[RMDB]
RNA sequence: GGGAACGACUCGAGUAGAGUCGAAAAUUAAAAGAUAUCGAUGAGGCCGGGCGUGGUCCCUCACGCUGUAAUCCCAGCUGUAGAGCACCCGAUGCUGUUGCUGUUCGGGGUGCCACUAUGUAACCCGACAUGUACCGUAGUUCGCUACGGUACAUGUAAAAGAAACAACAACAACAAC
Reactivity to DMS in 0.01 (KOAc 150mM, MgCl2 10mM, bicine 150mM(pH8.5), 24C), signal-to-noise 3, nucleotides 027 to 126: u000u000a070a070a100a110g010a070u010a060u020c080g000a090u010g000a110g020g010c060c030g010g000g000c040g000u010g020g000u010c050c030c010u000c040a020c060g000c000u010g000u000a080a090u000c030c030c020a070g010c080u000g010u000a050g000a230g010c020a080c020c000c010g010a070u000g020c010u000g010u000u000g010c010u020g000u000u020c050g020g010g010g030u010g010c020c110a060c080u020a030u010g000u000a060a120c020c020c010g000
Reactivity to 2A3 in 0.01 (KOAc 150mM, MgCl2 10mM, bicine 150mM(pH8.5), 24C), signal-to-noise 1, nucleotides 027 to 126: u060u020a080a030a000a020g190a110u070a040u140c050g050a030u060g010a070g100g080c100c150g070g000g000c070g010u070g070g030u030c030c000c000u040c000a010c000g020c000u010g080u140a010a070u000c000c010c000a000g000c090u060g050u090a010g030a010g060c010a010c000c000c000g020a070u130g000c080u050g150u300u220g040c060u100g090u170u000c020g010g000g000g000u020g000c030c000a070c060u070a090u130g100u020a050a060c000c000c040g000